[RMDB]
RNA sequence: GGGAACGACUCGAGUAGAGUCGAAAAGGAUGGUGCAGCUAAGAUGAGUUCUAAGAUUCCUUCCAGUGCCAGAAUUCUUUGUUAUUACUUCAGUGAUUGAAGGGGAAGAGGCAAGUCACAUAGCUUAGGUUUCCUUAAUUGGAGUGAUUAAGGAAAUCUUAUCGGGAUUUUUCGAAAUCCCGAUAAGAAAAGAAACAACAACAACAAC
Reactivity to 2A3 in 0.01 (KOAc 150mM, MgCl2 10mM, bicine 150mM(pH8.5), 24C), signal-to-noise 3, nucleotides 027 to 156: g030g000a030u070g000g010u060g020c030a010g000c050u060a050a070g020a110u110g020a060g040u080u010c030u050a110a090g010a200u050u070c010c000u000u040c030c030a030g030u030g100c020c010a030g050a050a110u090u040c000u060u070u110g110u110u090a130u090u100a110c010u030u040c050a050g030u050g190a150u200u080g020a100a070g010g020g010g040a030a030g030a040g030g000c020a020a030g010u090c010a000c010a110u080a030g020c020u080u100a050g010g120u040u020u000c000c000u000u000a010a010u020u050g090g000a080g090u120g010a020u000u020a010a000g000g000a000a070a000u010
Reactivity to DMS in 0.01 (KOAc 150mM, MgCl2 10mM, bicine 150mM(pH8.5), 24C), signal-to-noise 2, nucleotides 027 to 156: g010g000a040u000g020g010u000g050c010a080g000c060u000a090a130g000a090u000g000a090g020u010u000c050u000a060a130g020a110u000u000c000c000u000u000c020c010a110g020u000g010c020c030a130g000a090a130u000u000c040u000u010u010g010u020u000a080u020u000a090c000u010u000c040a110g010u010g020a080u000u010g010a020a060g000g020g010g000a060a060g020a080g020g000c010a060a080g000u010c050a000c040a070u000a090g010c040u000u010a070g030g020u000u000u000c000c000u000u000a000a030u000u020g030g000a200g040u000g000a040u000u000a060a030g010g000a020a030a040u010